Description:
Chemical mapping of a 177-nucleotide RNA with 2A3 and DMS. DMS adducts were read by reverse transcription with MarathonRT. 2A3 adducts were read by reverse transcription with SuperScript II with manganese. The 2A3 profile rests on 12,656 reads. The RNA was probed in 150 mM KOAc, 10 mM MgCl2 and 150 mM bicine (pH 8.5) at 24 C.

RNA sequence: GGGAACGACUCGAGUAGAGUCGAAAAGAUAUGGAGAUCCUAGGCGAUGAGUCCACGCAUCGGAAACGAUGUGGACGAGCCUGUCAUCUCCUAAGUCAAAGUUCACCCUCCUUCGGGAGGGUGAACACUCUAGGAUGAGGUUCGCCUCAUCCUAGAGAAAAGAAACAACAACAACAAC
Reactivity to 2A3 in 0.01 (KOAc 150mM, MgCl2 10mM, bicine 150mM(pH8.5), 24C), signal-to-noise 4, nucleotides 027 to 126: g000a000u010a010u060g010g000a010g000a010u040c050c070u100a040g020g000c020g240a300u280g060a200g010u000c000c000a030c060g300c060a060u020c000g000g000a000a010a000c010g000a010u020g010u000g000g000a000c000g020a020g000c000c010u010g020u000c020a010u000c000u000c000c000u000a010a000g000u000c020a100a140a030g000u000u000c000a000c000c000c010u010c000c010u040u070c240g190g000g010a000g000g000g000u000g000a000a000c000a000
Reactivity to DMS in 0.01 (KOAc 150mM, MgCl2 10mM, bicine 150mM(pH8.5), 24C), signal-to-noise 4, nucleotides 027 to 126: g000a010u000a010u010g010g000a020g020a010u000c040c020u000a010g020g020c010g010a220u020g020a110g010u000c000c010a040c030g020c230a020u000c000g020g010a020a010a030c000g010a010u000g010u000g000g000a030c000g000a020g020c000c000u000g000u000c040a020u000c000u000c000c000u000a000a100g000u000c000a100a090a160g020u000u000c000a000c000c000c000u000c000c000u000u010c260g040g000g020a020g000g010g000u000g010a000a000c000a070
DMS (dimethyl sulfate) methylates the pairing face of unpaired adenines and cytosines.